[RMDB]
An RNA of 177 nucleotides, treated with 2A3 and DMS and read out base by base. The reactions ran in a buffer of 150 mM KOAc, 10 mM MgCl2 and 150 mM bicine (pH 8.5), at 24 C. For DMS, 15,343 sequencing reads were counted. DMS adducts were read by reverse transcription with MarathonRT. 2A3 adducts were read by reverse transcription with SuperScript II with manganese.
RNA sequence: GGGAACGACUCGAGUAGAGUCGAAAAAGAUGCUGGCAAGGAUGUGGAGAAAGAGGAACACUCUUCUAUUGCUGGUGGGAUUGCAAGCUGGUACAACUACUCUGGAAAUCAGCCUGGAGGUUCCUCACUGAUAAAAUUAGUUCGCUAAUUUUAUCAGAAAAGAAACAACAACAACAAC
Reactivity to 2A3 in 0.01 (KOAc 150mM, MgCl2 10mM, bicine 150mM(pH8.5), 24C), signal-to-noise 5, nucleotides 027 to 126: a010g090a030u120g020c030u010g010g010c010a030a030g060g040a080u100g030u090g080g020a050g070a060a130a030g030a030g020g020a040a010c090a120c060u040c000u110u010c020u090a150u040u120g020c010u030g000g030u050g040g040g040a100u060u140g050c030a040a030g010c030u030g010g030u070a050c020a070a010c030u070a050c010u020c030u080g050g050a020a150a080u060c010a020g020c000c010u030g030g020a020g030g000u010u020c000c000u000c010a030
Reactivity to DMS in 0.01 (KOAc 150mM, MgCl2 10mM, bicine 150mM(pH8.5), 24C), signal-to-noise 8, nucleotides 027 to 126: a080g000a090u010g010c030u000g010g020c030a050a060g000g010a070u010g010u000g010g000a070g010a060a070a100g000a030g000g000a040a040c060a180c030u010c010u000u000c060u000a090u010u000g020c020u010g000g020u000g000g010g000a110u010u010g010c060a060a070g010c020u000g000g030u000a060c120a060a100c060u000a040c050u000c040u000g000g000a070a090a040u000c040a030g020c030c140u000g010g010a100g010g010u000u000c000c000u000c080a220